[RMDB]
RNA sequence: GGGAACGACUCGAGUAGAGUCGAAAAUCCCAUAGGUUGCCGAAUCCGAAAGGUAUGGAGGAACCGCUUUUUGGGGUUAAUCUGCAGUGAAGCUGCAGUAGGGAUACCUUCUGUCCCGCACCCGACAGCUAACUCCUGAGGCAAUAAAGGAAGGAGAAUUAAUAAUGACGUUCGCGUCAUUAUUAAUAAAAGAAACAACAACAACAAC
Reactivity to 2A3 in 0.01 (KOAc 150mM, MgCl2 10mM, bicine 150mM(pH8.5), 24C), signal-to-noise 3, nucleotides 027 to 156: u010c000c000c020a020u080a020g100g020u010u020g020c000c000g040a070a090u020c010c010g060a070a040a030g020g000u040a030u080g010g000a010g000g050a110a090c050c030g000c030u110u160u030u040u210g050g000g000g010u010u020a090a030u050c000u000g000c000a010g010u070g280a140a030g130c000u000g000c000a000g000u000a030g000g000g000a000u090a120c020c000u020u020c010u020g000u000c000c000c000g000c010a050c010c000c000g010a100c080a040g000c010u030a020a030c000u010c010c010u010g030a040g000g020c000a000a000u080a060a040a020g040g000a020a010g030g020a040g130a130
Reactivity to DMS in 0.01 (KOAc 150mM, MgCl2 10mM, bicine 150mM(pH8.5), 24C), signal-to-noise 3, nucleotides 027 to 156: u000c000c000c000a170u000a070g020g030u000u000g000c000c000g010a220a210u000c010c000g020a120a130a150g010g030u000a100u000g010g000a130g000g000a110a110c090c060g020c070u000u000u010u000u030g070g030g030g030u000u000a070a130u000c010u000g020c000a020g030u000g040a130a240g030c000u000g000c020a030g000u000a050g010g010g020a080u000a030c010c090u000u000c030u040g010u000c180c000c010g020c080a090c010c020c010g000a070c100a030g020c040u000a100a250c020u000c020c000u000g000a180g020g000c040a110a070u000a070a090a100g000g010a070a040g020g010a270g000a160